[RMDB]
RNA sequence: GGGAACGACUCGAGUAGAGUCGAAAAUAGGUCGUGUUCGCACGACCUAAGAUAAAAUCCAUAAAAUGCCAGUAACCCGAAACACAAGGGAGUGCACCUGGCCUACGAUGUCGUUCGCGACAUCGAAGAAUUAUUAGGCAUUCGUGCCUAAUAAUUCAAAAGAAACAACAACAACAAC
Reactivity to DMS in 0.01 (KOAc 150mM, MgCl2 10mM, bicine 150mM(pH8.5), 24C), signal-to-noise 6, nucleotides 027 to 126: u010a010g020g010u000c000g040u000g000u000u000c210g040c000a010c000g000a010c000c010u000a000a010g000a230u010a080a060a120a130u000c010c010a120u010a050a070a100a120u000g010c010c020a020g020u000a190a120c010c000c000g010a080a090a120c250a100c250a110a130g000g000g010a110g010u000g020c120a150c190c010u000g010g020c020c180u000a070c020g010a010u000g000u000c000g010u000u000c180g030c000g000a010c000a010u000c000g000a070a100
Reactivity to 2A3 in 0.01 (KOAc 150mM, MgCl2 10mM, bicine 150mM(pH8.5), 24C), signal-to-noise 7, nucleotides 027 to 126: u040a000g000g000u000c010g010u010g030u040u050c230g020c080a000c000g000a000c000c000u000a000a000g000a000u100a010a110a010a030u020c000c000a010u140a060a180a020a030u140g000c000c000a010g020u050a070a060c010c010c020g060a190a280a030c130a020c040a160a060g020g020g020a040g080u100g060c050a030c030c010u000g000g000c000c000u030a050c020g000a000u010g000u000c000g020u030u060c210g000c000g080a010c000a000u000c010g000a040a010
This 177-nucleotide RNA was probed chemically with DMS and 2A3.
The 2A3 profile rests on 15,830 reads.
For 2A3 the reverse transcriptase was SuperScript II with manganese.
It was measured as part of the RMDB library M2PK50.
For DMS the reverse transcriptase was MarathonRT.